[RMDB]
RNA sequence: GGGAACGACUCGAGUAGAGUCGAAAAGUUGGCUGCAGCGGGCGUCGAAGCGUCGACGGUGGGGAUGGUCGAAGCCCACGGCACCGGCACCCCCGUUGGAGAUCCGGUCGAAUACGCGAGCCUGGCCGAUUUCCGAAAAGUUCGCUUUUCGGAAAUCAAAAGAAACAACAACAACAAC
Reactivity to 2A3 in 0.01 (KOAc 150mM, MgCl2 10mM, bicine 150mM(pH8.5), 24C), signal-to-noise 1, nucleotides 027 to 126: g030u050u030g010g010c010u080g010c040a030g000c070g020g050g000c000g040u020c010g030a100a020g070c020g070u030c000g020a050c010g050g000u190g060g000g030g080a040u120g100g030u040c010g010a060a020g000c000c080c010a030c060g030g000c030a060c010c060g010g020c000a060c030c030c000c000c000g010u040u080g020g030a060g010a010u070c010c030g030g040u140c000g050a040a070u150a130c010g030c050g050a010g060c000c050u010g010g040c010c000
Reactivity to DMS in 0.01 (KOAc 150mM, MgCl2 10mM, bicine 150mM(pH8.5), 24C), signal-to-noise 2, nucleotides 027 to 126: g030u010u000g000g000c030u000g000c020a100g030c040g020g000g000c030g000u010c010g000a070a070g000c190g010u000c000g020a050c020g010g000u030g020g020g000g020a100u010g010g020u000c020g020a110a270g020c000c030c100a070c100g010g020c020a060c160c030g000g000c110a120c030c010c000c010c020g030u000u000g000g010a160g020a060u000c030c030g000g000u020c050g000a080a080u000a100c080g020c000g000a070g000c010c040u010g010g010c050c050
About this RNA: Chemical mapping of a 177-nucleotide RNA with 2A3 and DMS. For DMS, 1,355 sequencing reads were counted. The reactions ran in a buffer of 150 mM KOAc, 10 mM MgCl2 and 150 mM bicine (pH 8.5), at 24 C. For DMS the reverse transcriptase was MarathonRT. The data come from the RNA Mapping Database (RMDB), library OK2TRN.